This 177-nucleotide RNA was probed chemically with DMS and 2A3. The RNA was probed in 150 mM KOAc, 10 mM MgCl2 and 150 mM bicine (pH 8.5) at 24 C. The DMS profile rests on 3,729 reads. Reactivities are rounded to 0.1 and cut off at 0 and 3.
RNA sequence: GGGAACGACUCGAGUAGAGUCGAAAAUGAUCCUGGUACCUCCCAGGGUGGUGCUGAAGACUGUGCCCCUGGGGGGUUGUCCUGUAGCUGCAUGCCUUUGCCCAGCACCACCCAGUGAGUGGCAGGGAAAUAGCUACCCUUUCGAGGGUAGCUAUUUAAAAGAAACAACAACAACAAC
Reactivity to DMS in 0.01 (KOAc 150mM, MgCl2 10mM, bicine 150mM(pH8.5), 24C), signal-to-noise 3, nucleotides 027 to 126: u010g000a100u010c010c020u000g010g010u000a060c090c010u000c020c020c040a160g000g000g020u000g000g010u000g020c020u000g010a120a090g010a070c100u010g010u010g000c030c010c020c020u010g000g030g020g020g010g000u000u000g000u000c010c060u000g020u000a060g000c060u000g010c070a060u010g010c030c020u010u010u000g010c110c100c020a050g010c040a040c020c030a030c030c010c000a110g010u010g000a070g020u000g000g010c020a030g010g010g000
Reactivity to 2A3 in 0.01 (KOAc 150mM, MgCl2 10mM, bicine 150mM(pH8.5), 24C), signal-to-noise 1, nucleotides 027 to 126: u070g030a030u060c030c000u000g060g100u030a030c010c000u000c000c020c010a040g030g000g010u020g030g000u010g000c000u040g070a150a060g060a190c010u130g040u110g100c040c040c000c020u070g000g020g020g040g000g050u020u050g000u020c000c030u150g080u130a010g010c070u060g030c030a040u120g060c040c040u050u200u080g010c050c000c000a000g010c010a020c000c000a020c020c000c000a000g010u020g010a000g010u000g050g000c050a000g000g000g050